[RMDB]
RNA sequence: GGGAACGACUCGAGUAGAGUCGAAAACCGUGACAUUGCGAAAGCAAGGCUGGCGGUAGGUAGUCCUGGGCGGCGACAGGCUUGGACUGCGGCGUAAAGGUGUACCUGGGGCCGUUAAACCUAUCGUGAAAGGCAACUUGGUUCGCCAAGUUGCCAAGACGUAGACAUAGUUCGCUAUGUCUACGUCAAAAGAAACAACAACAACAAC
Reactivity to DMS in 0.01 (KOAc 150mM, MgCl2 10mM, bicine 150mM(pH8.5), 24C), signal-to-noise 3, nucleotides 027 to 156: c010c000g010u010g010a100c040a060u000u000g020c040g020a160a140a300g020c030a040a020g050g030c040u000g020g020c000g030g020u000a020g030g010u000a040g010u000c020c030u010g020g010g010c030g020g010c030g030a070c120a210g000g000c030u000u000g020g010a040c020u000g070c050g020g020c040g020u020a070a210a050g020g030u010g000u000a070c000c020u020g010g020g010g030c000c010g010u010u000a050a100a120c010c000u010a020u010c010g030u000g000a050a100a080g000g010c000a010a010c010u000u000g000g010u000u000c300g030c010c010a010a070g010u010u000g000c000c010a010a020
Reactivity to 2A3 in 0.01 (KOAc 150mM, MgCl2 10mM, bicine 150mM(pH8.5), 24C), signal-to-noise 5, nucleotides 027 to 156: c010c000g040u030g060a090c150a200u040u070g030c010g040a120a060a030g000c010a020a020g040g040c040u060g050g010c010g010g000u000a000g020g010u020a020g010u030c020c030u110g050g020g040c020g050g020c040g080a080c090a090g080g050c020u040u090g010g030a000c000u010g010c000g000g010c000g020u100a050a060a030g040g020u160g080u200a160c010c010u020g000g010g080g000c000c000g010u010u120a100a080a020c010c000u010a000u030c010g000u040g070a090a050a030g010g000c000a000a000c000u000u000g010g010u050u030c060g020c100c000a000a000g010u000u000g000c000c000a000a000
Structure probing data (DMS and 2A3) for a 207-nucleotide construct.
The RNA was probed in 150 mM KOAc, 10 mM MgCl2 and 150 mM bicine (pH 8.5) at 24 C.
For 2A3, 4,055 sequencing reads were counted.
DMS adducts were read by reverse transcription with MarathonRT.